[RMDB]
RNA sequence: GGGAACGACUCGAGUAGAGUCGAAAAGCCGUGUUCGCACGGCAAAAUAAGUAGUAGUGCCGCAGGUAACCGAUUUCAAUGGUUUACCUACUGCCUCCUGCUUAGAAAAAACCAUGCUUCGGCAUGGGUGAAUAUACACCUUCGGGUGUAUAUUCACAAAAGAAACAACAACAACAAC
Reactivity to DMS in 0.01 (KOAc 150mM, MgCl2 10mM, bicine 150mM(pH8.5), 24C), signal-to-noise 3, nucleotides 027 to 126: g020c000c000g020u000g020u000u000c220g050c000a010c000g010g010c000a010a010a040a100u000a010a010g010u000a000g010u010a010g000u020g030c000c100g020c030a000g010g000u000a010a020c000c000g010a170u000u010u020c300a150a140u010g010g000u000u000u000a010c010c000u000a010c010u000g000c010c010u000c060c000u000g000c000u000u000a020g000a000a060a050a080a090a250c000c000a000u000g010c000u000u010c190g030g000c000a000u000g000g000
Reactivity to 2A3 in 0.01 (KOAc 150mM, MgCl2 10mM, bicine 150mM(pH8.5), 24C), signal-to-noise 4, nucleotides 027 to 126: g000c010c010g000u010g020u020u090c250g000c080a000c000g000g020c010a010a010a000a010u010a000a000g000u000a010g000u010a010g010u030g090c030c030g010c030a010g000g000u010a010a000c010c020g040a100u070u270u260c160a130a100u230g040g000u060u070u060a000c000c000u010a010c010u010g010c000c000u030c000c000u000g000c000u010u000a010g100a020a120a010a000a000a000c000c000a000u010g000c000u060u090c230g090g000c000a010u000g000g000